Conditions: 150 mM KOAc, 10 mM MgCl2 and 150 mM bicine (pH 8.5), 24 C.
Structure probing data (2A3) for a 177-nucleotide construct.
It was measured as part of the RMDB library OK1LIB.
For 2A3 the reverse transcriptase was SuperScript II with manganese.
RNA sequence: GGGAACGACUCGAGUAGAGUCGAAAACAUACCAGUUAAACCUGGACAGACUAUCGCAUCAUUUAUGCAAGAGACUGUUAUGCUGUAUGGCACCAUGGCACGCUACCUCCGUAAGAUGCGGCAAAGAGAGCCCUCGUGCAUUCGUGCACGAGGGCUCAAAAGAAACAACAACAACAAC
Reactivity to 2A3 in 0.01 (KOAc 150mM, MgCl2 10mM, bicine 150mM(pH8.5), 24C), signal-to-noise 1, nucleotides 027 to 126: c060a070u250a000c000c000a020g020u060u140a290a000a000c000c000u000g020g000a000c000a000g060a110c080u160a120u110c050g000c000a020u090c060a060u070u110u300a120u190g000c050a190a060g000a060g100a020c000u030g160u110u080a050u090g140c000u000g050u120a230u050g040g080c050a000c000c000a000u050g020g000c000a020c030g090c000u060a050c000c020u000c000c000g000u050a130a130g000a090u000g100c000g000g000c000a000a090a000g030a000